This 207-nucleotide RNA was probed chemically with 2A3. The reactions ran in a buffer of 150 mM KOAc, 10 mM MgCl2 and 150 mM bicine (pH 8.5), at 24 C. The data come from the RNA Mapping Database (RMDB), library M2RFPK.
RNA sequence: GGGAACGACUCGAGUAGAGUCGAAAAACGGUCAUAUACGUAUGACCGAAUGAACAUAACAGGGCCACCCCAAAGCGUUCACAUUGUGGCCCCUGUCAGAUUCUGGUAAAUCUGCGAGUUCUGCUAAAUUAGGUAACUCUCUUCGGAGAGUUACCAAGUCCUACCUACAGUUCGCUGUAGGUAGGACAAAAGAAACAACAACAACAAC
Reactivity to 2A3 in 0.01 (KOAc 150mM, MgCl2 10mM, bicine 150mM(pH8.5), 24C), signal-to-noise 1, nucleotides 027 to 156: a000c010g000g000u010c000a020u010a020u020a110c230g100u030a040u000g000a000c000c000g000a010a110u090g000a000a000c000a100u070a090a000c000a010g000g040g000c000c000a010c000c010c000c020a000a100a090g080c100g050u130u140c060a150c120a190u180u160g000u000g020g010c070c010c000c030u000g120u060c020a040g000a030u100u000c090u300g100g020u060a010a000a040u020c020u050g020c000g060a040g010u100u000c020u060g020c030u110a050a090a160u280u180a100g010g000u010a000a020c000u000c000u000c000u020u060c050g050g010a000g010a000g000u000u000a000c000c000a000a000
2A3 adducts were read by reverse transcription with SuperScript II with manganese. Values cover nucleotides 27 to 156.